The record gives the reactivity of an RNA of 177 nucleotides to 2A3.
RNA sequence: GGGAACGACUCGAGUAGAGUCGAAAAGCACGUUUUGCAUGCUAGGUAUGACCUGUGACCACCGAACGCGAAAGCGAAACAGGUCAUUUGCCGAGGUGGGAGGUGGGAAAGCAUGCUUUCGUGCGAAGGGAUAGCAAUCCUUCGGGAUUGCUAUCCCAAAAGAAACAACAACAACAAC
Reactivity to 2A3 in 0.01 (KOAc 150mM, MgCl2 10mM, bicine 150mM(pH8.5), 24C), signal-to-noise 2, nucleotides 027 to 126: g000c000a000c000g000u000u010u130u160g010c000a010u050g010c000u000a020g030g030u120a020u040g020a030c020c000u000g020u030g060a090c040c020a010c020c080g070a060a030c000g010c000g050a030a000a080g060c010g010a040a190a000c000a000g010g060u010c000a010u010u000u130g020c010c050g010a010g040g040u220g040g040g000a130g020g150u250g020g010g020a040a040a000g000c000a000u000g000c000u000u020u000c000g010u010g010c010g000a060a010